[RMDB]
RNA sequence: GGGAACGACUCGAGUAGAGUCGAAAAGAUAUGGACGGAUGUGCAAGGCGAUAUGUCGGAAACGACAUACGCUGAUGACCACAAUCGUCCUAAGUCAAAACACGUUCGCUGUUCGCAGCGAACGUGACACCGAUCAGAGGUUCGCCUCUGAUCGGUGAAAAGAAACAACAACAACAAC
Reactivity to 2A3 in 0.01 (KOAc 150mM, MgCl2 10mM, bicine 150mM(pH8.5), 24C), signal-to-noise 2, nucleotides 027 to 126: g000a000u040a010u060g010g010a000c010g000g040a050u070g060u050g020c110a190a280g030g000c010g090a260u000a010u020g000u000c010g000g030a050a000a000c010g000a000c000a000u000a000c000g060c000u010g040a020u050g040a010c030c000a000c000a000a070u050c010g020u010c020c000u010a040a010g010u000c020a010a030a140a080c020a020c050g000u000u010c000g000c020u030g160u170u080c300g010c160a040g020c010g020a000a000c000g000u010g000a000
Reactivity to DMS in 0.01 (KOAc 150mM, MgCl2 10mM, bicine 150mM(pH8.5), 24C), signal-to-noise 1, nucleotides 027 to 126: g000a040u000a080u000g000g000a020c000g000g000a070u010g040u000g050c030a110a060g000g010c000g010a160u000a000u000g000u000c010g010g010a070a010a080c000g010a000c010a000u000a000c000g010c010u010g000a040u040g000a120c300c000a030c030a000a030u000c010g030u000c000c000u000a010a110g000u010c020a160a060a120a230c010a000c010g010u000u000c030g030c020u000g020u020u000c200g050c040a010g000c010g020a000a000c000g010u000g010a140
Notes: An RNA of 177 nucleotides, treated with 2A3 and DMS and read out base by base. For DMS the reverse transcriptase was MarathonRT. 2A3 adducts were read by reverse transcription with SuperScript II with manganese. The 2A3 profile rests on 3,839 reads. The DMS profile rests on 1,342 reads.